[RMDB]
RNA sequence: GGGAACGACUCGAGUAGAGUCGAAAAGAAAUUUGCAUUACAUAGUUAAAAUCAGGGUUAUUCAAACUUUUUGAUUAUUGAAAACUUUCUUCAUUAGUUACUAGGGUUGAAUGAAACUAGUGUUCCACACCUGUUAUAUCUUCGGAUAUAACAGGUGAAAAGAAACAACAACAACAAC
Reactivity to 2A3 in 0.01 (KOAc 150mM, MgCl2 10mM, bicine 150mM(pH8.5), 24C), signal-to-noise 3, nucleotides 027 to 126: g000a010a060a000u050u060u130g060c010a000u000u190a070c010a050u220a060g060u080u130a170a090a030a120u100c020a020g060g030g000u060u080a030u130u080c030a130a080a030c020u070u060u060u130u120g010a000u000u080a020u000u030g040a040a050a060a060c050u060u110u100c000u010u000c000a030u000u010a000g030u030u020a020c030u010a040g060g140g140u040u110g060a050a020u040g030a020a050a000c010u020a020g040u010g040u100u000c000c010a020
Reactivity to DMS in 0.01 (KOAc 150mM, MgCl2 10mM, bicine 150mM(pH8.5), 24C), signal-to-noise 3, nucleotides 027 to 126: g010a060a060a080u000u000u000g010c090a060u000u010a110c110a120u000a080g000u000u010a050a060a040a090u010c090a040g010g010g000u010u000a040u010u000c090a040a030a030c000u000u000u000u000u000g010a010u000u000a010u000u000g010a030a020a060a120c190u000u010u010c060u000u000c010a010u000u000a010g000u000u000a030c050u000a050g000g000g010u010u000g000a040a070u010g010a060a040a020c010u010a040g000u000g010u000u000c000c020a190
Overview
The record gives the reactivity of an RNA of 177 nucleotides to 2A3 and DMS. The data come from the RNA Mapping Database (RMDB), library OK2TST. High 2A3 reactivity points to a flexible backbone, as in loops and unpaired stretches. DMS adducts were read by reverse transcription with MarathonRT. The reactions ran in a buffer of 150 mM KOAc, 10 mM MgCl2 and 150 mM bicine (pH 8.5), at 24 C.